[RMDB]
RNA sequence: GGGAACGACUCGAGUAGAGUCGAAAAGAUCCACAGUUCGCUGUGGAUCAAAAAGCGUACUACUAGCCGUAUAUACAGCAACAGCACUUCCCAAAUAGGAAGUGACAUGCUGUAUACCGGCUAGUAUCGCAAAAACGAUGCGAUUCGUCGCAUCGAACGUUCCUACGGAGUUCGCUCCGUAGGAACGAAAAGAAACAACAACAACAAC
Reactivity to 2A3 in 0.01 (KOAc 150mM, MgCl2 10mM, bicine 150mM(pH8.5), 24C), signal-to-noise 2, nucleotides 027 to 156: g000a000u000c000c000a000c000a000g020u070u090c300g020c170u000g000u000g020g000a000u000c000a000a000a000a000a000g010c010g000u070a020c000u000a000c000u000a040g010c010c000g050u030a020u010a000u000a280c010a010g020c040a060a090c020a210g050c000a010c010u050u000c000c010c060a210a220a000u300a100g000g000a000a010g010u000g140a080c020a030u040g000c000u000g010u000a000u000a000c000c000g000g020c000u000a000g010u000a000u000c000g000c000a000a000a000a050a060c010g010a000u000g000c000g010a000u000u110c300g070u000c000g040c000a030u010c000g000a170a000